[RMDB]
RNA sequence: GGGAACGACUCGAGUAGAGUCGAAAAAAAGCAACAGGAAUGGUCCAUUAGUUUGGGGAAUCAUACAGCACAAUUUGCAGAAAUAGCUGCUUUUGAGUUUGCCCUUAAAAAAUGUUUGCCUUUGGGACACCCAUAAACAGUUCGCUGUUUAUGGGUGAAAAGAAACAACAACAACAAC
Reactivity to DMS in 0.01 (KOAc 150mM, MgCl2 10mM, bicine 150mM(pH8.5), 24C), signal-to-noise 3, nucleotides 027 to 126: a030a050a050g010c020a050a040c070a050g000g010a060a070u000g010g010u010c110c020a060u010u010a130g010u000u000u000g010g010g010g000a120a020u000c050a050u000a100c110a030g010c040a060c090a120a050u000u000u000g000c160a070g010a040a020a060u010a110g020c060u000g000c070u020u000u000u000g010a080g020u000u010u010g000c010c030c010u020u030a010a010a050a060a030a110u010g000u010u010u000g000c060c020u000u000u020g000g010g030a300
Reactivity to 2A3 in 0.01 (KOAc 150mM, MgCl2 10mM, bicine 150mM(pH8.5), 24C), signal-to-noise 2, nucleotides 027 to 126: a000a000a000g050c020a010a070c020a030g090g050a060a030u100g050g010u010c000c000a050u020u060a050g190u050u090u050g080g010g000g020a000a020u020c030a060u030a110c030a030g010c030a000c030a090a080u020u130u140g040c040a000g150a110a110a060u140a060g050c030u000g030c000u090u080u010u030g030a030g040u000u130u170g100c000c000c000u030u070a120a110a040a000a010a020u090g000u060u040u020g030c000c000u000u070u050g040g050g010a010
About this RNA: Source: RMDB library OK2TST, as collected in RNAgym. An RNA of 177 nucleotides, treated with DMS and 2A3 and read out base by base. For 2A3 the reverse transcriptase was SuperScript II with manganese. The 2A3 profile rests on 1,109 reads. The reactions ran in a buffer of 150 mM KOAc, 10 mM MgCl2 and 150 mM bicine (pH 8.5), at 24 C. Values are in units of 0.01, from 0 to 300, in steps of 10. Reactivities are given for positions 27 through 126.